Chemical mapping of a 177-nucleotide RNA with DMS.

[RMDB]
RNA sequence: GGGAACGACUCGAGUAGAGUCGAAAAAGUAUCUAAUUCGUUAGAUACUCGGGGACGGGUGAGGCGGCCGUGAGCGCAGACAGUGCUCCAGCCGCGCGCGCGAAUUUCGCCUAUUCGUAGGCGAAAAAAUAUAAUAUGUUUUCGAACAUAUUAUAUUAAAAGAAACAACAACAACAAC
Reactivity to DMS in 0.01 (KOAc 150mM, MgCl2 10mM, bicine 150mM(pH8.5), 24C), signal-to-noise 3, nucleotides 027 to 126: a010g000u010a000u000c000u010a020a020u000u010c150g020u000u000a000g010a010u000a010c000u010c030g000g000g000g030a270c040g010g000g030u000g000a090g020g020c010g000g000c020c020g010u010g010a020g020c000g030c000a120g020a120c260a140g010u000g010c000u000c000c020a070g000c010c010g020c010g020c040g010c030g010c020g010a100a120u000u000u000c010g010c000c000u000a030u000u010c170g010u000a010g010g000c000g010a000a000a020a020
The RNA was probed in 150 mM KOAc, 10 mM MgCl2 and 150 mM bicine (pH 8.5) at 24 C. The DMS profile rests on 3,380 reads.